[RMDB]
RNA sequence: GGGAACGACUCGAGUAGAGUCGAAAAUUAGAGGUCUCGAUCACAGCGAGACCGGGAGAGACGCUCCCGGGCCGGGUUAGGAACCGGAGCGGCGGGUGGUAUAGGAGCCGGCCGGACCCGGGGAUAACACUAACUUCCUAUUCGUAGGAAGUUAGUGAAAAGAAACAACAACAACAAC
Reactivity to DMS in 0.01 (KOAc 150mM, MgCl2 10mM, bicine 150mM(pH8.5), 24C), signal-to-noise 3, nucleotides 027 to 126: u020u020a110g000a140g010g000u000c010u000c000g000a080u000c200a100c300a170g000c020g000a020g000a020c000c010g010g000g000a060g010a170g020a080c110g010c130u000c010c000c010g010g010g020c010c010g000g000g010u010u000a100g030g010a130a170c010c010g010g000a060g000c080g000g000c120g010g000g010u000g010g000u000a090u010a170g000g010a210g010c000c010g010g050c000c010g010g010a120c000c000c010g010g000g010g000a080u010a040a120
Reactivity to 2A3 in 0.01 (KOAc 150mM, MgCl2 10mM, bicine 150mM(pH8.5), 24C), signal-to-noise 2, nucleotides 027 to 126: u180u090a060g020a050g070g020u000c020u010c000g070a190u260c100a090c110a170g090c010g000a000g000a000c010c000g000g010g010a150g000a010g000a010c060g000c100u070c060c020c000g000g060g000c000c000g020g030g020u100u200a100g060g040a060a040c020c010g020g000a020g040c000g010g010c110g040g030g060u100g000g040u170a160u160a300g080g000a060g040c000c000g120g020c020c020g050g090a200c020c000c020g000g000g000g000a060u110a080a010
An RNA of 177 nucleotides, treated with DMS and 2A3 and read out base by base. For DMS, 2,762 sequencing reads were counted. For DMS the reverse transcriptase was MarathonRT. The reactions ran in a buffer of 150 mM KOAc, 10 mM MgCl2 and 150 mM bicine (pH 8.5), at 24 C. For 2A3 the reverse transcriptase was SuperScript II with manganese. The 2A3 profile rests on 1,997 reads.